Source: RMDB library OK1LIB, as collected in RNAgym. Structure probing data (2A3) for a 177-nucleotide construct. Reactivities are rounded to 0.1 and cut off at 0 and 3.

[RMDB]
RNA sequence: GGGAACGACUCGAGUAGAGUCGAAAAGACACACUUAGCAGAUGACCUCCUCGUUGGUGGGUGUCGGUAAUGUUGUCAGUCACAGGCAACAGUUAACGAUCUGCCUAAAUAAAAAGAGAAGAACAAACACGGAGGAUCGGUUCGCCGAUCCUCCGUGAAAAGAAACAACAACAACAAC
Reactivity to 2A3 in 0.01 (KOAc 150mM, MgCl2 10mM, bicine 150mM(pH8.5), 24C), signal-to-noise 1, nucleotides 027 to 126: g000a000c000a000c000a010c040u090u000a010g000c000a040g000a030u060g000a110c000c000u000c010c000u060c000g090u030u140g000g060u040g030g000g000u030g040u000c060g020g200u210a090a040u040g000u000u000g000u030c030a020g300u000c160a100c070a130g000g010c000a000a000c000a090g000u030u040a000a070c060g080a000u050c000u000g000c000c000u060a060a000a000u300a000a000a080a000a000g140a000g040a260a000g000a110a030c240a210a040a000